[RMDB]
RNA sequence: GGGAACGACUCGAGUAGAGUCGAAAAAAAAGAUAUGGACGUGCCUACCCACCGUUGGGUUCGACGAUGAAAGCACUCGGAAACGAGUGCUGGAGUCGAAUCAACGAGGGCACGUCCUAAGUCAAAACCAUGUCAAGUUGUUCGCAACUUGACAUGGAAAAGAAACAACAACAACAAC
Reactivity to 2A3 in 0.01 (KOAc 150mM, MgCl2 10mM, bicine 150mM(pH8.5), 24C), signal-to-noise 2, nucleotides 027 to 126: a000a010a000a020g250a090u270a120u250g000g000a000c000g000u000g020c000c030u230a300c040c110c000a030c010c050g010u000u040g300g020g050u010u040c010g000a010c020g230a300u080g000a040a040a000g000c010a000c000u000c010g040g030a070a090a030c000g000a000g000u000g000c000u000g030g000a000g000u000c000g000a000a000u000c000a000a000c010g000a010g020g000g000c000a010c000g000u010c010c000u000a010a010g000u020c020a000a000a100a110
Reactivity to DMS in 0.01 (KOAc 150mM, MgCl2 10mM, bicine 150mM(pH8.5), 24C), signal-to-noise 2, nucleotides 027 to 126: a050a010a060a030g020a130u030a230u000g000g000a010c010g010u010g020c000c000u000a130c020c000c020a300c090c010g000u030u000g070g010g030u000u000c000g000a010c000g000a160u030g000a110a100a040g010c000a000c000u000c000g020g000a070a080a140c010g020a000g000u000g000c000u000g020g030a030g000u000c020g020a010a000u000c000a010a010c010g020a130g010g020g010c000a000c000g000u000c000c000u000a020a080g020u010c180a060a120a120a150
Structure probing data (2A3 and DMS) for a 177-nucleotide construct. For 2A3, 3,605 sequencing reads were counted. 2A3 adducts were read by reverse transcription with SuperScript II with manganese. Conditions: 150 mM KOAc, 10 mM MgCl2 and 150 mM bicine (pH 8.5), 24 C. For DMS, 1,986 sequencing reads were counted.